[RMDB]
An RNA of 177 nucleotides, treated with DMS and read out base by base. For DMS the reverse transcriptase was MarathonRT.
RNA sequence: GGGAACGACUCGAGUAGAGUCGAAAAGAUAUGGACGAGUCGUAGGCGAACUAAGACAGGUAAAAGGCACACUUCGGAAACGAAGUGUGCCUUUUACUCGAGUUCCCUACGAGCUCGUCCUAAGUCACGUAAUGGUAAGGUUCGCCUUACCAUUACGAAAAGAAACAACAACAACAAC
Reactivity to DMS in 0.01 (KOAc 150mM, MgCl2 10mM, bicine 150mM(pH8.5), 24C), signal-to-noise 2, nucleotides 027 to 126: g000a050u010a300u010g020g000a030c000g000a040g010u000c000g020u000a010g010g030c240g040a000a020c000u030a200a140g050a200c300a090g010g000u000a010a000a010a000g000g010c000a000c000a020c000u010u000c000g020g000a080a080a140c000g040a010a000g030u010g000u000g010c000c000u000u000u000u000a010c000u010c040g000a030g010u000u000c020c000c000u000a010c010g010a030g020c010u000c000g000u000c000c010u030a010a090g010u000c040a260